[RMDB]
RNA sequence: GGGAACGACUCGAGUAGAGUCGAAAAGAUAUGGAAGCCAGUUUCGAAGAACGUAUUCGACUCGGAAACGAGUCGAGAUACGGGAGAAAUCUGGCUUCCUAAGUCAAAAGCAAGGUUCGCCUUGCAACGAAGGUAAAUAGUUCGCUAUUUACCUUCGAAAAGAAACAACAACAACAAC
Reactivity to 2A3 in 0.01 (KOAc 150mM, MgCl2 10mM, bicine 150mM(pH8.5), 24C), signal-to-noise 4, nucleotides 027 to 126: g010a020u070a040u160g000g010a000a010g000c020c000a000g000u010u020u040c180g120a300a080g040a230a090c020g000u000a010u010u020c000g010a000c010u000c000g020g030a030a060a010c010g000a000g020u000c000g000a010g000a010u010a010c000g010g000g000a150g020a000a030a020u190c020u010g000g010c010u000u000c000c000u020a000a000g000u000c020a070a000a030a130g000c000a010a000g010g040u120u180c250g140c080c000u000u010g000c010a000a010
Reactivity to DMS in 0.01 (KOAc 150mM, MgCl2 10mM, bicine 150mM(pH8.5), 24C), signal-to-noise 7, nucleotides 027 to 126: g000a040u000a300u010g010g000a020a000g020c000c000a010g010u010u000u000c020g010a150a180g010a170a220c000g000u000a000u000u000c000g010a020c010u000c000g000g010a100a110a240c000g000a010g000u010c000g000a030g010a010u000a000c000g000g000g010a130g010a020a020a010u010c010u000g000g010c010u000u000c000c000u000a020a080g000u010c030a100a110a120a160g010c000a000a020g010g020u000u020c300g010c000c010u010u000g010c020a050a100
Record summary
This 177-nucleotide RNA was probed chemically with 2A3 and DMS. The RNA was probed in 150 mM KOAc, 10 mM MgCl2 and 150 mM bicine (pH 8.5) at 24 C. For 2A3, 16,777 sequencing reads were counted.